[RMDB]
RNA sequence: GGGAACGACUCGAGUAGAGUCGAAAAGUUAAGAUGUGGGGUCAUAAGCUCGGUGAAGUCAGCCAGGAUUGUACCCUAAGGCUCUAUAUGAUUCGCUAUGUCGAUUGACUAGGUUCUACUGGACUGACUCUCGCAUCAUUUUCGAAUGAUGCGAGAGAAAAGAAACAACAACAACAAC
Reactivity to 2A3 in 0.01 (KOAc 150mM, MgCl2 10mM, bicine 150mM(pH8.5), 24C), signal-to-noise 3, nucleotides 027 to 126: g090u060u060a070a020g000a110u080g000u100g070g020g000g040u050c040a070u070a210a000g010c030u020c060g080g030u170g030a060a010g020u060c010a000g010c030c000a010g040g020a040u160u030g060u200a110c000c000c000u000a040a050g020g000c000u000c050u040a030u010a040u180g050a150u190u090c000g000c100u080a050u150g050u050c040g090a150u010u180g010a030c000u010a030g020g000u070u010c010u040a060c080u090g000g070a000c000u010g040a020
Reactivity to DMS in 0.01 (KOAc 150mM, MgCl2 10mM, bicine 150mM(pH8.5), 24C), signal-to-noise 2, nucleotides 027 to 126: g020u000u000a070a050g020a080u030g000u000g020g010g000g000u010c040a080u020a180a170g010c090u000c090g000g000u040g030a040a060g010u020c070a120g000c000c010a010g000g010a050u000u020g030u010a160c150c000c030u010a110a050g000g010c050u000c110u000a140u030a060u030g000a000u020u010c000g050c110u010a040u030g040u040c030g000a080u030u030g020a040c050u000a080g020g010u010u000c030u000a100c030u010g020g000a140c060u000g000a090
Annotation:
Source: RMDB library OK1LIB, as collected in RNAgym. This 177-nucleotide RNA was probed chemically with 2A3 and DMS. DMS adducts were read by reverse transcription with MarathonRT. For 2A3 the reverse transcriptase was SuperScript II with manganese. Values cover nucleotides 27 to 126.